[RMDB]
RNA sequence: GGGAACGACUCGAGUAGAGUCGAAAAACCAGGGAGAGCUGGAGUGGUUCAGCCAUCGUUCAUCCUGAGGAGAAUGUUCUUACCACAGUAUAGAAGCGUGCAAUUUCCUUUGUCAAUGAACAUGCCACAUAUCGCACCUCUUCGGAGGUGCGAUAUGAAAAGAAACAACAACAACAAC
Reactivity to 2A3 in 0.01 (KOAc 150mM, MgCl2 10mM, bicine 150mM(pH8.5), 24C), signal-to-noise 2, nucleotides 027 to 126: a000c020c020a060g020g010g030a250g020a020g020c080u080g010g020a110g090u180g020g140u130u110c020a010g040c030c020a050u060c040g030u000u040c010a090u020c020c070u060g000a030g000g030a050g030a010a050u090g030u030u050c020u000u040a030c060c000a090c030a140g040u070a110u060a190g160a130a010g120c070g020u040g060c030a030a070u010u030u090c000c050u020u020u020g050u030c040a090a110u030g010a010a010c020a000u020g020c000c030a060
Reactivity to DMS in 0.01 (KOAc 150mM, MgCl2 10mM, bicine 150mM(pH8.5), 24C), signal-to-noise 2, nucleotides 027 to 126: a130c010c000a120g000g010g010a050g000a080g000c020u000g010g010a090g030u010g010g020u000u010c030a060g020c070c020a040u000c170g000u000u000c010a050u000c110c020u000g000a080g020g000a100g000a030a060u000g000u000u000c020u000u000a080c060c150a070c150a090g000u000a190u000a070g020a050a040g060c200g000u000g010c070a110a040u000u000u000c010c000u000u000u010g010u000c140a090a070u000g010a050a050c050a040u010g010c020c040a120

The record gives the reactivity of an RNA of 177 nucleotides to 2A3 and DMS. For DMS the reverse transcriptase was MarathonRT. The data come from the RNA Mapping Database (RMDB), library OK2TST. Conditions: 150 mM KOAc, 10 mM MgCl2 and 150 mM bicine (pH 8.5), 24 C.